[RMDB]
RNA sequence: GGGAACGACUCGAGUAGAGUCGAAAAGUCAUGCCUUCGGGCAUGACAGGUACCGAGAGGUACCAAAUAGCGUACAGCAGACUCAGAGUGUACGCUGAGUAAGUGUGUGUUCAAUAAGGUCCAAUUGAACACACGCUCCGUUGGACCAAGAGUGUGAUAAUAGGGAGGGUUUCGACCCUCCCUAUUAAAAAGAAACAACAACAACAAC
Reactivity to DMS in 0.01 (KOAc 150mM, MgCl2 10mM, bicine 150mM(pH8.5), 24C), signal-to-noise 1, nucleotides 027 to 156: g000u000c000a000u000g010c000c000u000u000c300g020g000g010c010a000u000g000a010c030a020g020g000u000a020c010c000g010a240g060a300g000g020u000a000c000c000a050a020a040u010a020g020c010g050u000a000c000a110g030c090a150g000a100c060u000c030a120g000a180g000u000g010u000a000c010g000c000u000g020a070g000u010a080a010g060u000g000u010g000u000g030u000u000c020a020a010u000a070a140g040g030u020c060c030a260a080u000u000g010a030a000c020a040c000a010c010g000c010u000c000c040g010u030u010g010g000a050c060c060a040a120g000a110g000u020g030u010g000a170
Source information: The record gives the reactivity of an RNA of 207 nucleotides to DMS. The data come from the RNA Mapping Database (RMDB), library OK3TST. Values cover nucleotides 27 to 156.